[RMDB]
RNA sequence: GGGAACGACUCGAGUAGAGUCGAAAACUCGGCGGUAAUAUGCUGGCCUGUUUGCUGGCAAAGGAAGGCAAUGAUCUCCCGGUUGAUGCGGCGGUGAUUGUCUCUGCGCCGUUUAUGCUGGAAGCCACCAUGCAAAAUGCUUCGGCAUUUUGCAUGGAAAAGAAACAACAACAACAAC
Reactivity to 2A3 in 0.01 (KOAc 150mM, MgCl2 10mM, bicine 150mM(pH8.5), 24C), signal-to-noise 1, nucleotides 027 to 126: c030u020c020g040g000c030g000g000u080a050a080u060a140u300g000c030u040g010g060c000c020u230g120u100u200u300g050c030u020g010g000c000a030a060a000g090g010a050a070g000g020c020a010a040u110g000a020u100c010u070c000c040c020g090g000u150u210g200a180u290g050c050g050g040c020g000g000u040g050a000u000u030g030u030c030u030c020u080g040c000g000c010c020g000u000u040u030a170u060g030c040u130g000g080a030a000g010c040c000a040
Reactivity to DMS in 0.01 (KOAc 150mM, MgCl2 10mM, bicine 150mM(pH8.5), 24C), signal-to-noise 2, nucleotides 027 to 126: c050u000c060g020g020c000g020g000u010a110a170u000a080u000g020c010u000g020g000c010c220u000g020u020u000u000g000c020u000g030g020c010a030a130a140g000g020a090a070g000g010c010a030a040u010g000a030u000c020u000c150c000c000g000g020u000u010g010a130u000g000c090g010g030c230g000g010u000g000a030u000u000g000u000c040u000c020u010g000c090g010c000c020g000u000u000u000a040u010g030c040u000g000g010a120a080g010c060c120a230
An RNA of 177 nucleotides, treated with 2A3 and DMS and read out base by base. Conditions: 150 mM KOAc, 10 mM MgCl2 and 150 mM bicine (pH 8.5), 24 C. For DMS, 1,833 sequencing reads were counted. 2A3 adducts were read by reverse transcription with SuperScript II with manganese. The data come from the RNA Mapping Database (RMDB), library OK2TST. Values are in units of 0.01, from 0 to 300, in steps of 10.